[RMDB]
RNA sequence: GGGAACGACUCGAGUAGAGUCGAAAAGAUAUGGAUGUACCAGGACAUGAUCUGUCGGAAACGACUGAUCAACAGCCUGGAACAUCCUAAGUCAAAAGGAAGCAGUCUCUUCGGAGACUGCUUCCAACACUUACCCCCUCUUCGGAGGGGGUAAGUGAAAAGAAACAACAACAACAAC
Reactivity to DMS in 0.01 (KOAc 150mM, MgCl2 10mM, bicine 150mM(pH8.5), 24C), signal-to-noise 1, nucleotides 027 to 126: g000a050u000a170u000g020g000a010u010g040u000a100c010c000a000g020g010a090c200a130u000g010a000u000c000u000g030u010c000g010g000a060a020a090c000g000a010c010u000g000a020u000c000a030a190c300a110g040c000c000u000g010g000a100a000c000a000u000c010c010u000a000a060g000u000c010a100a070a170a080g000g010a000a000g060c000a020g000u000c010u000c000u000u010c170g030g000a050g010a000c010u000g000c000u000u000c000c000a000a070